[RMDB]
RNA sequence: GGGAACGACUCGAGUAGAGUCGAAAAAGUUCCGAACGAAGAGACCGCCGGGGAAGGGGGGCGAACCGACGGGAGUUCAAUGGUAAAGAGGCGAAGAACCUCGGAGGUUCCCUCCCAAGAAGGUUCACACCAGUAGGCUUCGGCCUACUGAAAAGAAACAACAACAACAAC
Reactivity to DMS in 0.01 (KOAc 150mM, MgCl2 10mM, bicine 150mM(pH8.5), 24C), signal-to-noise 8, nucleotides 027 to 129: a110g000u030u010c000c000g020a110a080c110g020a050a020g020a000g020a050c070c050g040c050c050g010g000g000g000a110a120g000g000g000g000g000g000c150g010a030a030c010c010g020a230c020g000g000g000a110g000u020u020c030a070a130u030g000g030u040a040a080a090g010a110g020g000c080g040a110a130g030a040a020c000c000u010c020g000g000a120g020g000u020u020c000c030c000u020c000c000c000a010a010g020a080a050g000g000u060u000c060a050c100a110c120
Reactivity to 2A3 in 0.01 (KOAc 150mM, MgCl2 10mM, bicine 150mM(pH8.5), 24C), signal-to-noise 7, nucleotides 027 to 129: a010g070u070u020c010c000g020a050a020c040g010a030a030g030a000g030a050c020c020g050c030c020g020g020g010g020a040a050g020g000g000g010g010g010c130g020a020a010c020c000g030a010c010g010g000g000a170g010u000u000c030a080a050u070g060g000u080a110a120a050g090a070g090g030c080g040a100a060g020a060a010c010c000u000c010g000g000a010g000g000u000u010c020c000c000u000c000c010c000a010a030g030a010a010g050g000u060u080c020a010c010a020c080